An RNA of 177 nucleotides, treated with 2A3 and DMS and read out base by base. Conditions: 150 mM KOAc, 10 mM MgCl2 and 150 mM bicine (pH 8.5), 24 C. For 2A3 the reverse transcriptase was SuperScript II with manganese. Source: RMDB library OK2TST, as collected in RNAgym.
RNA sequence: GGGAACGACUCGAGUAGAGUCGAAAAUCACGACCGAUCAGCCUAUUGAUCGGCUUCACCGGCGAACCGGCGCACCAACGCUGCCCGGUCCACCUUGCCGAUGCCGCGUCGCGGUAGCACGUUCACGCGCUAUCGCACUCUUCGGAGUGCGAUAGCGAAAAGAAACAACAACAACAAC
Reactivity to 2A3 in 0.01 (KOAc 150mM, MgCl2 10mM, bicine 150mM(pH8.5), 24C), signal-to-noise 2, nucleotides 027 to 126: u030c010a070c170g110a100c000c050g000a010u000c010a010g160c010c150u210a140u200u030g020a010u000c000g000g000c010u160u090c030a030c000c010g000g020c010g020a030a020c030c010g060g000c090g000c010a100c070c110a240a010c050g000c120u030g030c020c000c010g000g000u000c000c020a120c030c020u080u120g000c020c000g070a060u060g120c130c000g010c000g230u220c110g010c030g030g070u050a050g040c040a050c100g090u160u110c110a060c060g070
Reactivity to DMS in 0.01 (KOAc 150mM, MgCl2 10mM, bicine 150mM(pH8.5), 24C), signal-to-noise 2, nucleotides 027 to 126: u000c110a120c110g000a210c000c020g000a060u000c030a080g000c210c080u000a100u000u010g030a010u000c000g000g000c080u010u010c100a040c110c070g000g020c000g020a040a030c020c060g000g130c170g000c010a070c030c140a030a070c260g020c300u000g030c050c030c000g000g010u000c020c060a190c050c050u000u010g050c040c030g010a080u030g040c130c050g030c020g010u000c070g000c000g000g000u000a080g000c090a090c030g020u000u000c080a160c080g040